[RMDB]
RNA sequence: GGGAACGACUCGAGUAGAGUCGAAAAGAGUAUAGCUUCGGCUAUACUCAAAACACUACAUGCAGCGCUCUAGGUGUGUAGUGACAGUAAGCGCGCUAAUAAAAACGACAGGGUUCGCCCUGUCGAACAAGUUUAUGAACUUCGGUUCAUAAACUUGAAAAGAAACAACAACAACAAC
Reactivity to 2A3 in 0.01 (KOAc 150mM, MgCl2 10mM, bicine 150mM(pH8.5), 24C), signal-to-noise 4, nucleotides 027 to 126: g010a000g000u000a000u010a000g010c020u040u060c270g020g010c000u000a000u000a010c000u000c000a010a000a000a000c000a000c000u010a010c000a010u030g010c000a010g010c020g020c020u040c050u170a100g030g020u020g000u000g000u000a010g010u010g090a050c030a060g170u150a070a020g010c020g000c010g020c100u090a180a130u110a150a260a020a020a040c020g000a000c000a000g000g010g010u030u020c040g110c010c000c000u000g000u020c000g000a000a010
Reactivity to DMS in 0.01 (KOAc 150mM, MgCl2 10mM, bicine 150mM(pH8.5), 24C), signal-to-noise 3, nucleotides 027 to 126: g010a020g010u000a010u000a000g000c020u000u000c210g040g010c000u000a000u010a000c000u010c000a050a070a120a250c010a020c010u000a010c000a010u010g010c020a180g020c020g020c010u000c050u010a090g020g020u010g020u010g010u000a010g020u000g000a050c170a090g010u010a100a020g000c000g010c000g030c260u010a090a100u020a080a060a080a080a160c010g000a010c000a000g000g000g010u000u010c190g000c000c010c000u000g000u000c000g000a030a070
Chemical mapping of a 177-nucleotide RNA with 2A3 and DMS. Source: RMDB library M2PK50, as collected in RNAgym. In probing experiments dimethyl sulfate is read out at A N1 and C N3, which are open when not base-paired. The RNA was probed in 150 mM KOAc, 10 mM MgCl2 and 150 mM bicine (pH 8.5) at 24 C.